The record gives the reactivity of an RNA of 207 nucleotides to 2A3 and DMS. The DMS profile rests on 2,983 reads. The RNA was probed in 150 mM KOAc, 10 mM MgCl2 and 150 mM bicine (pH 8.5) at 24 C. For 2A3, 10,056 sequencing reads were counted.
[RMDB]
RNA sequence: GGGAACGACUCGAGUAGAGUCGAAAAACAGUCGGUACGCUGACUGAGGGAAACGGGAGCCGGGCUUGGGACAAGAGCCAUCCCAAGUCCAAGGCCAAGUAGGCUCUAGUGAUGGUACGCCAUCACAAAAACUGGUCUACCUUCGGGUAGACCAGAACCGAUAUUUAAAGUUCGCUUUAAAUAUCGGAAAAGAAACAACAACAACAAC
Reactivity to 2A3 in 0.01 (KOAc 150mM, MgCl2 10mM, bicine 150mM(pH8.5), 24C), signal-to-noise 6, nucleotides 027 to 156: a000c010a000g000u010c010g000g020u070a060c190g020c100u020g000a010c000u010g000a090g020g050g030a070a120a130c130g020g040g050a050g030c030c050g010g010g000c000u000u000g000g000g010a010c020a080a070g000a000g000c000c000a010u000c000c000c000a000a000g000u000c010c000a050a020g030g000c050c020a060a020g060u110a090g060g000c000u000c010u020a040g000u000g010a010u000g010g010u030a030c260g040c030c000a000u000c000a000c010a010a050a000a000a000c000u000g000g000u000c000u000a000c000c000u020u050c170g100g000g000u000a000g000a000c000c000a000g000a000a000
Reactivity to DMS in 0.01 (KOAc 150mM, MgCl2 10mM, bicine 150mM(pH8.5), 24C), signal-to-noise 1, nucleotides 027 to 156: a100c040a040g030u010c010g030g050u010a060c140g070c060u000g020a020c050u000g000a140g010g000g020a060a120a090c080g000g000g000a190g010c070c100g040g030g010c030u000u000g000g010g020a000c050a060a070g010a060g000c030c030a300u000c010c010c010a010a040g010u000c010c010a040a030g030g000c050c050a080a040g020u000a110g020g020c020u000c000u000a140g010u000g000a010u000g010g020u000a110c300g040c070c000a040u000c020a020c000a030a020a030a040a090c000u000g010g000u000c000u000a000c010c000u000u000c300g010g070g020u000a000g070a010c000c000a000g000a010a110